[RMDB]
Chemical mapping of a 207-nucleotide RNA with 2A3.
The RNA was probed in 150 mM KOAc, 10 mM MgCl2 and 150 mM bicine (pH 8.5) at 24 C.
RNA sequence: GGGAACGACUCGAGUAGAGUCGAAAACGCGAUUGGCGCCAUUGUAUUUGCGUGGUUGGAGCCUAAGUUUACAUUUCUUGCGGUGGCUAUAAUAUUGACUAUGCGAUACUUAUUUGGUGCCACAGAUGACACUACAUUAGCGACAUUAAUGGGCGCCCAAGGCUGGAAUUUUCGAAUUCCAGCCUUGAAAAGAAACAACAACAACAAC
Reactivity to 2A3 in 0.01 (KOAc 150mM, MgCl2 10mM, bicine 150mM(pH8.5), 24C), signal-to-noise 2, nucleotides 027 to 156: c070g050c070g080a220u130u190g000g000c000g020c010c010a000u000u050g020u010a010u030u080u300g000c000g000u030g000g030u020u100g180g080a000g020c000c020u000a020a000g020u000u030u030a120c120a190u220u300u100c050u090u160g040c050g030g030u020g020g000c060u060a030u050a280a180u120a140u200u300g000a000c020u000a000u010g000c000g000a000u010a000c020u040u240a140u200u110u050g040g000u010g020c060c000a010c010a000g030a030u100g080a000c000a030c180u250a030c020a050u140u150a020g050c010g080a060c010a010u100u160a060a040u140g000g030g070c000g000c000c000